An RNA of 177 nucleotides, treated with DMS and read out base by base. The DMS profile rests on 875 reads.

[RMDB]
RNA sequence: GGGAACGACUCGAGUAGAGUCGAAAAUAAGAGCAGCUAUGAGAUGUCUCACCUUCCUUGGCUCGGGGUUUGGAGGACAGAUGUAGCAUGACUGUCAGGAAAGAGCAAACCUGAGUCCUGGUGUGGAGUUAGCUGUUGUGUUCGCACAACAGCUAACAAAAGAAACAACAACAACAAC
Reactivity to DMS in 0.01 (KOAc 150mM, MgCl2 10mM, bicine 150mM(pH8.5), 24C), signal-to-noise 1, nucleotides 027 to 126: u000a090a140g040a100g030c050a060g000c070u040a080u010g020a030g030a160u020g000u000c010u000c010a160c010c020u000u000c010c010u000u000g010g010c010u010c040g010g010g010g000u000u000u000g030g000a120g010g000a050c000a020g020a210u000g000u000a070g000c100a080u030g000a090c000u000g030u000c020a090g000g040a070a080a110g040a150g000c060a010a030a060c010c000u000g000a030g000u000c000c070u020g010g030u000g030u010g000g020a200